[RMDB]
This 177-nucleotide RNA was probed chemically with 2A3. The 2A3 profile rests on 645 reads. The data come from the RNA Mapping Database (RMDB), library RFM100.
RNA sequence: GGGAACGACUCGAGUAGAGUCGAAAACUUAGAUCCACCUUUGUGGAUGCCCGUCUUGAGCUGAGUUCUACUUGUAAACUUCUGGUUUCUUGUAGUUCCAGUCAAAGAAACAUCCAGCAACUUUUUUGCAGUGUCGUAAUUUCGAUUACGACACUGCAAAAGAAACAACAACAACAAC
Reactivity to 2A3 in 0.01 (KOAc 150mM, MgCl2 10mM, bicine 150mM(pH8.5), 24C), signal-to-noise 1, nucleotides 027 to 126: c040u110u140a070g030a140u080c000c000a010c020c060u160u090u230g010u040g010g000a000u000g020c040c030c000g010u030c010u000u070g030a100g030c000u000g000a000g020u000u000c000u000a000c000u030u010g130u300a000a000a000c000u130u040c140u300g130g000u000u030u000c000u000u020g000u000a000g000u000u000c000c000a010g000u000c000a080a050a000g000a000a000a000c040a000u000c000c040a020g000c030a230a080c090u120u020u000u030u060u060